[RMDB]
RNA sequence: GGGAACGACUCGAGUAGAGUCGAAAAGAUAUGGAUACGCUUGGGAGAUCACACUCGGAAACGAGUGAAUGAUCGAGGAUCAAGAUGUAUCCUAAGUCAAACCAACCGAGGUUCGCCUCGGUUGGAACGAUGUACCUCGGUUCGCCGAGGUACAUCGAAAAGAAACAACAACAACAAC
Reactivity to DMS in 0.01 (KOAc 150mM, MgCl2 10mM, bicine 150mM(pH8.5), 24C), signal-to-noise 1, nucleotides 027 to 126: g030a010u000a060u000g000g000a010u010a000c040g020c010u000u000g020g010g010a000g020a010u010c010a110c000a000c000u000c000g000g000a010a010a040c000g010a000g000u010g040a090a130u000g010a000u000c020g000a100g020g010a010u000c020a020a000g000a080u010g010u000a000u000c000c000u000a000a130g000u020c020a130a160a270c020c000a000a030c000c000g000a040g010g030u020u010c300g010c010c000u000c000g010g010u000u000g040g000a020a030
Reactivity to 2A3 in 0.01 (KOAc 150mM, MgCl2 10mM, bicine 150mM(pH8.5), 24C), signal-to-noise 1, nucleotides 027 to 126: g020a000u050a010u050g000g000a000u020a000c020g000c020u010u000g000g000g000a060g030a000u000c000a000c000a030c070u030c000g010g000a020a020a010c000g000a000g040u040g020a080a190u260g010a010u000c010g030a100g000g040a010u010c010a000a010g070a140u160g020u010a000u000c000c000u000a000a000g000u000c000a020a030a180c000c000a010a000c010c000g030a010g080g000u140u090c260g140c060c000u000c020g020g000u010u000g000g000a020a010
The data come from the RNA Mapping Database (RMDB), library TTRDES. Structure probing data (DMS and 2A3) for a 177-nucleotide construct. The RNA was probed in 150 mM KOAc, 10 mM MgCl2 and 150 mM bicine (pH 8.5) at 24 C. The 2A3 profile rests on 3,321 reads. For DMS the reverse transcriptase was MarathonRT.